[RMDB]
RNA sequence: GGGAACGACUCGAGUAGAGUCGAAAACGUCGACAUCAAUGCGCCUGCUCUCGCAGAGCUGACCAGCGGCAUCGGCCUGGAUUGCUCGAUCCAGACGAUGAACGGCACCUCCAGCACCGACUCCGAGCACCGUUGCUCUAUUCGUAGAGCAACGGUGAAAAGAAACAACAACAACAAC
Reactivity to DMS in 0.01 (KOAc 150mM, MgCl2 10mM, bicine 150mM(pH8.5), 24C), signal-to-noise 2, nucleotides 027 to 126: c110g010u010c010g010a170c130a050u010c090a050a050u000g030c080g020c050c010u000g000c030u000c060u000c160g030c100a100g010a040g050c040u000g010a080c080c060a070g030c020g000g030c000a040u000c000g000g010c190c000u000g000g010a030u000u000g010c100u000c100g000a230u000c000c000a010g000a060c020g030a010u020g000a060a100c070g010g000c020a090c030c010u020c010c000a060g020c080a150c070c030g000a100c090u010c030c010g060a080g000
Reactivity to 2A3 in 0.01 (KOAc 150mM, MgCl2 10mM, bicine 150mM(pH8.5), 24C), signal-to-noise 1, nucleotides 027 to 126: c030g010u040c030g040a050c020a100u090c070a090a090u090g060c050g020c020c020u070g000c000u010c000u020c060g000c040a010g020a000g050c010u050g050a060c010c030a020g040c000g060g000c010a020u000c010g030g050c040c000u000g000g010a020u010u050g060c100u070c120g000a010u040c000c000a000g000a000c010g020a010u030g020a090a080c020g020g000c010a030c000c000u000c030c020a050g020c030a040c040c020g100a050c010u010c030c020g030a000g030
Structure probing data (DMS and 2A3) for a 177-nucleotide construct.
The data come from the RNA Mapping Database (RMDB), library OK2TST.